Overview:
Structure probing data (DMS and 2A3) for a 207-nucleotide construct. The RNA was probed in 150 mM KOAc, 10 mM MgCl2 and 150 mM bicine (pH 8.5) at 24 C. For 2A3 the reverse transcriptase was SuperScript II with manganese. For DMS the reverse transcriptase was MarathonRT. The data come from the RNA Mapping Database (RMDB), library OK3TST.
RNA sequence: GGGAACGACUCGAGUAGAGUCGAAAAGCAGUGAGCAUUGUAACCUGUAUCACUGUAAAUCUUAUUUGCAAGGCUGAUGGAUCAAUCAAUUGAAAGCUGAGCCCAGCAGGUGAGGGAAAACUCCCGUCUUUGUCAUGGCGCGUGUCCACUCCUCAAACAAAAUCGCUAUCUUCGGAUAGCGAUUUUGAAAAGAAACAACAACAACAAC
Reactivity to DMS in 0.01 (KOAc 150mM, MgCl2 10mM, bicine 150mM(pH8.5), 24C), signal-to-noise 1, nucleotides 027 to 156: g030c000a030g040u040g010a070g010c050a160u000u000g060u000a110a100c140c140u010g000u000a100u000c000a030c030u040g020u010a010a120a130u000c050u010u000a050u000u010u000g000c030a100a170g060g020c070u000g020a130u010g030g030a140u000c090a090a170u010c140a050a210u010u000g000a050a140a080g000c030u010g010a070g000c040c020c030a150g020c030a070g000g010u010g000a040g020g000g010a100a070a130a140c090u010c000c050c010g020u010c020u000u000u000g020u000c030a080u000g010g000c020g000c050g060u000g000u000c010c010a100c050u000c050c010u000c010a070a120a290
Reactivity to 2A3 in 0.01 (KOAc 150mM, MgCl2 10mM, bicine 150mM(pH8.5), 24C), signal-to-noise 3, nucleotides 027 to 156: g040c000a000g020u010g020a000g000c030a040u110u140g140u260a090a110c060c020u040g000u040a300u090c000a020c010u000g020u030a020a040a050u050c030u050u090a100u100u150u080g050c040a080a050g020g020c030u030g050a120u090g120g000a020u040c020a060a030u010c050a080a240u160u120g040a180a070a010g010c050u030g010a000g030c000c010c020a000g030c010a010g050g000u020g020a040g000g000g000a000a080a080a080c070u040c030c050c000g060u020c040u080u150u100g080u080c050a080u100g000g000c030g010c030g050u060g010u000c010c030a030c010u000c000c000u040c030a000a080a020